Notes: Structure probing data (DMS) for a 177-nucleotide construct. The RNA was probed in 150 mM KOAc, 10 mM MgCl2 and 150 mM bicine (pH 8.5) at 24 C. It was measured as part of the RMDB library OK2TRN. For DMS the reverse transcriptase was MarathonRT.

[RMDB]
RNA sequence: GGGAACGACUCGAGUAGAGUCGAAAAUAUGUUAAGUAAAUUGAUAUAACCUAAGAAAAGAUCUUGUUGCCAAUUCAGAAACCAUAACCUUAAAUAGCAUGCCUGGGUCUCCUCUGUAUCUGGUUUACAGCAAGUAUAUCUUCGGAUAUACUUGCUGAAAAGAAACAACAACAACAAC
Reactivity to DMS in 0.01 (KOAc 150mM, MgCl2 10mM, bicine 150mM(pH8.5), 24C), signal-to-noise 2, nucleotides 027 to 126: u000a060u000g000u000u000a030a100g000u000a060a120a180u010u000g010a060u010a050u000a030a200c020c020u020a060a120g000a100a070a080a060g000a060u000c070u010u000g020u010u010g020c060c050a020a130u000u030c100a070g010a090a060a090c070c050a060u030a040a100c050c050u000u020a040a060a120u000a070g010c020a040u000g030c070c030u000g000g000g010u000c030u000c080c030u010c090u000g010u010a040u000c060u000g000g020u010u020u000a090